[RMDB]
RNA sequence: GGGAACGACUCGAGUAGAGUCGAAAAGAAAGGCGCGCCUGACAUCUAAAUGGAGUUGCCGCGAGGCCCUCUCGCCUGUUGGCAUCCGUCGAGAUCCUGGGAGACGAUCGCGGUCAGUCCACAGAAAGGGUAAUCAAAUCUUCGGAUUUGAUUACCCAAAAGAAACAACAACAACAAC
Reactivity to 2A3 in 0.01 (KOAc 150mM, MgCl2 10mM, bicine 150mM(pH8.5), 24C), signal-to-noise 2, nucleotides 027 to 126: g060a010a100a000g110g000c000g010c000g040c000c040u050g090a100c010a120u050c050u100a160a170a120u090g030g010a040g150u030u020g010c000c000g020c030g000a010g030g000c000c030c000u000c040u040c030g090c020c000u110g010u050u150g070g010c020a100u020c020c000g150u120c050g010a050g020a110u030c000c030u080g060g060g000a020g000a010c030g040a020u010c000g000c010g010g000u040c030a010g070u000c030c000a060c010a020g060a020a130a000
Reactivity to DMS in 0.01 (KOAc 150mM, MgCl2 10mM, bicine 150mM(pH8.5), 24C), signal-to-noise 2, nucleotides 027 to 126: g030a090a030a040g000g000c060g000c020g000c000c020u000g000a050c040a050u000c050u010a040a110a100u040g000g000a040g000u020u000g000c000c020g010c100g000a060g000g010c060c040c030u000c020u020c060g060c040c040u020g010u000u000g000g050c080a100u020c010c170g030u000c080g000a160g000a050u030c030c010u020g000g000g030a170g000a050c140g000a160u000c020g000c030g000g000u000c130a060g010u000c000c010a040c160a100g000a060a090a080